RNA sequence: GGGAACGACUCGAGUAGAGUCGAAAACUACGGUUCAGGAGCCGGUCAAGACAACGGCGAUGCCAUCUUUCGUUUCUUCUCCUACCGCGACCCUCGCAUUGAAGAGACUCUGAAUGAUUUUGAUGCCCCUGAAAAGCAUUUUCGAAUGCUUUUCAGGAAAAGAAACAACAACAACAAC
Reactivity to 2A3 in 0.01 (KOAc 150mM, MgCl2 10mM, bicine 150mM(pH8.5), 24C), signal-to-noise 1, nucleotides 027 to 126: c010u010a010c050g060g020u060u140c050a060g000g090a040g000c020c000g020g080u050c100a000a090g060a070c030a050a040c050g030g000c050g090a070u180g050c000c020a030u070c000u000u080u060c010g030u000u010u040c000u080u000c010u000c000c010u030a060c000c000g030c030g040a060c040c020c040u070c000g020c020a050u000u110g010a010a010g040a000g050a050c000u010c050u110g110a110a120u060g030a070u030u090u090u050g030a030u070g080c000c070
Reactivity to DMS in 0.01 (KOAc 150mM, MgCl2 10mM, bicine 150mM(pH8.5), 24C), signal-to-noise 2, nucleotides 027 to 126: c040u000a080c070g000g010u000u000c090a090g010g000a170g010c090c030g000g000u010c120a070a100g000a090c140a060a080c060g010g000c020g000a100u010g010c100c050a070u020c060u000u010u000c040g020u000u000u000c010u010u000c020u000c050c050u000a120c110c060g000c050g020a080c040c080c040u000c040g030c040a100u000u010g000a070a070g000a150g000a110c050u000c040u000g000a060a050u020g010a140u000u000u000u000g020a150u000g020c080c100